The record gives the reactivity of an RNA of 177 nucleotides to 2A3 and DMS. Reactivities are rounded to 0.1 and cut off at 0 and 3.
RNA sequence: GGGAACGACUCGAGUAGAGUCGAAAACUUAUGAGCUUGUGGGCUCCAUCUACCAACCUCUGGGCAAAUGCUCAUCUGACUUCCAUAGACACACAGCAAGCAGACAACCACACAAAGAGGAAGAGGGGUUGGAGAUGCUAUUCGUAGCAUCUCCAACAAAAGAAACAACAACAACAAC
Reactivity to 2A3 in 0.01 (KOAc 150mM, MgCl2 10mM, bicine 150mM(pH8.5), 24C), signal-to-noise 6, nucleotides 027 to 126: c030u130u080a070u180g030a000g030c010u090u070g080u100g110g030g000c000u000c020c010a060u020c020u100a100c030c010a070a040c000c010u020c030u040g010g030g000c030a130a090a090u200g010c020u010c020a070u000c030u050g100a180c010u060u030c030c000a040u060a120g050a050c020a010c000a010c010a110g040c020a110a010g010c010a000g020a060c020a080a070c030c000a010c010a020c020a040a170a020g100a020g070g010a020a000g040a020g020g030g020
Reactivity to DMS in 0.01 (KOAc 150mM, MgCl2 10mM, bicine 150mM(pH8.5), 24C), signal-to-noise 2, nucleotides 027 to 126: c070u020u000a120u000g030a100g010c000u000u040g010u040g030g010g000c080u000c000c100a010u010c080u040a090c030c020a070a100c050c010u000c010u030g070g050g000c090a090a060a010u030g010c030u000c020a030u000c090u000g020a120c050u040u030c000c020a130u050a000g000a160c070a140c150a040c090a120g000c070a060a080g030c040a020g000a080c060a020a160c040c040a030c080a020c110a040a030a090g000a040g010g000a090a020g010a050g010g000g000
Record summary:
For 2A3 the reverse transcriptase was SuperScript II with manganese. The data come from the RNA Mapping Database (RMDB), libraries RFM100 and RFMREP.